[RMDB]
RNA sequence: GGGAACGACUCGAGUAGAGUCGAAAAGCAAUUGCCAUUCAAUGAAUUCAUUGCGUAGUACCUCUCUGAGAUGCAAUACUUCCCGGUAGCAUCCAGGUUCCUCGCAGGUACGUUGAUGCGGAUGGGCCUACUGGAUUAUGUUCGCAUAAUCCAGUAGAAAAGAAACAACAACAACAAC
Reactivity to 2A3 in 0.01 (KOAc 150mM, MgCl2 10mM, bicine 150mM(pH8.5), 24C), signal-to-noise 9, nucleotides 027 to 126: g040c030a030a110u150u150g060c020c040a020u050u050c040a070a170u180g130a090a120u150u100c030a040u050u110g050c020g020u040a030g030u040a090c020c010u040c010u020c010u030g040a060g000a300u010g000c030a130a160u030a080c020u080u090c010c010c010g020g000u040a060g090c000a000u000c000c000a000g010g030u080u120c030c030u060c050g050c090a000g000g010u020a020c010g020u030u110g030a060u090g020c030g030g020a030u030g040g030g000c010
Reactivity to DMS in 0.01 (KOAc 150mM, MgCl2 10mM, bicine 150mM(pH8.5), 24C), signal-to-noise 7, nucleotides 027 to 126: g010c080a060a050u020u020g020c070c060a020u010u010c040a080a090u030g000a110a090u020u020c050a030u000u010g000c040g020u020a140g000u010a040c030c020u010c100u020c030u010g000a100g000a010u000g000c000a090a070u060a040c030u000u010c000c010c010g000g000u010a100g000c000a010u000c000c010a020g000g000u010u010c040c030u010c070g010c190a030g000g000u000a010c070g010u000u010g000a080u010g000c100g000g010a080u010g010g000g020c170
An RNA of 177 nucleotides, treated with 2A3 and DMS and read out base by base. The reactions ran in a buffer of 150 mM KOAc, 10 mM MgCl2 and 150 mM bicine (pH 8.5), at 24 C. For 2A3 the reverse transcriptase was SuperScript II with manganese. For DMS, 28,277 sequencing reads were counted.